[RMDB]
RNA sequence: GGGAACGACUCGAGUAGAGUCGAAAACAACACGUCUUCGGACGUGUUGAAAGGUGGUGCGUACGAUAACGCAUAUAAAGCCCAAGACAAGCAGGGCAAAAAAAACAACCAGCUUCGGCUGGUUGAAGCCAUCCUAAUAGUUCGCUAUUAGGAUGGCAAAAGAAACAACAACAACAAC
Reactivity to DMS in 0.01 (KOAc 150mM, MgCl2 10mM, bicine 150mM(pH8.5), 24C), signal-to-noise 2, nucleotides 027 to 126: c020a040a000c040a010c000g000u020c000u000u020c170g030g000a010c000g020u000g000u010u020g010a040a090a050g000g030u020g030g010u030g020c000g020u000a080c140g020a130u000a100a040c010g020c020a000u000a080u020a120a080a140g030c010c010c010a120a040g030a290c130a050a060g000c160a170g000g010g040c110a000a000a000a020a040a050a090a080c010a030a000c000c000a000g010c000u000u010c120g050g000c010u000g000g020u000u000g010a010a050
Reactivity to 2A3 in 0.01 (KOAc 150mM, MgCl2 10mM, bicine 150mM(pH8.5), 24C), signal-to-noise 1, nucleotides 027 to 126: c000a000a000c000a000c010g000u040c010u030u040c140g080g010a000c000g000u000g010u000u000g000a020a010a010g190g050u240g020g020u010g020c000g000u020a040c060g030a080u050a250a000c010g000c020a020u040a000u000a060a110a010g000c000c000c000a040a040g160a090c030a130a020g070c080a130g000g000g000c000a030a000a050a000a000a010a010a010c000a000a000c000c010a000g000c000u040u140c170g150g030c000u010g020g000u000u000g000a000a030